The record gives the reactivity of an RNA of 207 nucleotides to 2A3 and DMS.
The RNA was probed in 150 mM KOAc, 10 mM MgCl2 and 150 mM bicine (pH 8.5) at 24 C.
Source: RMDB library RSTRND, as collected in RNAgym.
Reactivities are given for positions 27 through 156.
For 2A3, 1,596 sequencing reads were counted.
DMS adducts were read by reverse transcription with MarathonRT.
For 2A3 the reverse transcriptase was SuperScript II with manganese.

RNA sequence: GGGAACGACUCGAGUAGAGUCGAAAAAGGUCUCGACGGCGAGUCGGAGCCUUGAGCUGCAGGCAGGGUUGGCUGCCACACCUUAAAAAGGGUAGCAAGGCAAAAAUAAAUGCCGAACCAGAAUUUGCACUAGCUGCUUAAUGUAAGCAGCCGCUCUAGCUAAUAUGAUGUUCGCAUCAUAUUAGCUAAAAGAAACAACAACAACAAC
Reactivity to 2A3 in 0.01 (KOAc 150mM, MgCl2 10mM, bicine 150mM(pH8.5), 24C), signal-to-noise 3, nucleotides 027 to 156: a000g060g030u020c010u010c050g040a040c020g000g140c090g020a040g030u020c010g000g000a020g040c000c000u000u030g040a030g000c030u080g030c100a070g000g020c010a020g010g000g060u030u040g000g040c000u010g010c030c000a010c000a000c020c010u130u130a020a130a040a100a010g040g010g000u030a030g010c070a020a040g030g000c030a040a040a070a000a110u200a030a090a030u080g010c000c010g050a030a020c020c000a090g100a150a110u090u130u080g000c010a030c080u040a000g000c010u010g000c010u050u060a260a040u300g050u080a020a010g000c000a000g010c010c010g040c000u050c040u010
Reactivity to DMS in 0.01 (KOAc 150mM, MgCl2 10mM, bicine 150mM(pH8.5), 24C), signal-to-noise 1, nucleotides 027 to 156: a090g010g000u010c000u000c010g020a020c020g000g030c060g030a180g020u000c010g000g000a080g020c000c010u010u000g010a050g030c000u020g000c030a050g030g020c070a060g020g000g040u000u020g010g000c070u000g000c000c010a080c070a050c000c020u000u000a010a100a130a150a100g000g000g050u000a030g010c070a100a160g000g000c020a000a040a070a090a120u000a080a110a160u030g010c000c010g000a040a050c060c010a170g000a100a110u000u000u010g020c010a060c130u000a070g010c010u000g000c000u010u010a130a160u000g010u000a060a010g050c000a020g020c000c010g020c030u020c070u000